[RMDB]
RNA sequence: GGGAACGACUCGAGUAGAGUCGAAAAGUAGGGGCGCAGGUUCAUGCCAACGCUCCGUGCAGCACUUCAGGAUGGGUGGGAGGCACGCUGCUAUACUCGCCACCACAUGGAGCUAAAGCGGGGGACUGUGUGACAUCUGUAGCGUUCGAUACGCUUAAUUUUGUAAUAAGUUCGCUUAUUACAAAAUAAAAGAAACAACAACAACAAC
Reactivity to 2A3 in 0.01 (KOAc 150mM, MgCl2 10mM, bicine 150mM(pH8.5), 24C), signal-to-noise 3, nucleotides 027 to 156: g110u100a050g000g020g010g000c010g000c010a010g050g050u080u060c040a040u150g030c030c010a010a030c050g000c050u000c010c000g030u030g000c020a040g000c020a050c040u100u110c060a080g100g030a150u150g080g050g030u040g010g020g000a040g030g030c070a030c120g120c060u170g000c030u040a050u060a140c010u000c050g150c020c000a040c030c010a020c010a040u020g000g020a020g000c030u120a180a090a060g020c040g020g000g000g000g010a010c040u080g030u020g030u020g060a030c020a050u100c070u080g050u100a040g010c020g000u050u060c080g050a030u030a160c030g000c010u020u040a090
Reactivity to DMS in 0.01 (KOAc 150mM, MgCl2 10mM, bicine 150mM(pH8.5), 24C), signal-to-noise 2, nucleotides 027 to 156: g010u010a140g010g010g000g040c020g020c060a110g050g010u000u000c120a120u000g000c020c020a080a110c060g030c010u000c020c000g010u000g040c050a120g000c100a120c050u000u010c080a130g040g020a140u010g010g030g030u010g010g000g020a090g000g020c070a080c100g000c050u010g000c040u000a110u000a080c030u000c020g010c000c010a060c000c020a100c050a130u000g010g000a090g030c020u000a080a140a190g020c020g020g000g010g020g020a080c010u000g000u010g020u010g000a050c060a060u000c030u010g020u000a070g020c020g010u000u000c130g010a190u020a050c040g010c020u020u000a060